[RMDB]
RNA sequence: GGGAACGACUCGAGUAGAGUCGAAAAACUCGUAAGGGGCAAUUCCCCUGUAUUCAACUAUAAUAAGGCAACCAAAAGGCUUACCGUUCUUGGAAAGGACGCAGGUGCAUUAACAGAGGAUCCAGAUGAGGGGACAGCCGGAGUGGAAUCUGCAGUAUGGAGUGUUAAGAUUCGUCUUAACACUCCAAAAAGAAACAACAACAACAAC
Reactivity to DMS in 0.01 (KOAc 150mM, MgCl2 10mM, bicine 150mM(pH8.5), 24C), signal-to-noise 1, nucleotides 027 to 156: a070c050u000c080g040u010a170a060g050g070g050g060c030a120a160u010u000c010c010c010c030u000g010u010a040u030u010c030a080a160c010u000a030u000a060a110u000a090a090g030g020c040a050a100c010c030a010a060a150a130g010g030c030u000u000a040c040c010g010u000u000c010u000u010g010g020a050a130a210g030g020a030c030g030c050a050g030g010u010g040c050a090u010u000a130a160c070a100g010a090g010g010a090u000c050c080a010g010a100u000g010a090g020g010g010g000a100c050a040g030c030c010g020g000a010g020u000g040g010a070a120u000c040u000g010c040a090g010u010a190
Structure probing data (DMS) for a 207-nucleotide construct. The data come from the RNA Mapping Database (RMDB), library OK3TST. Conditions: 150 mM KOAc, 10 mM MgCl2 and 150 mM bicine (pH 8.5), 24 C. The DMS profile rests on 2,114 reads. Values cover nucleotides 27 to 156. For DMS the reverse transcriptase was MarathonRT.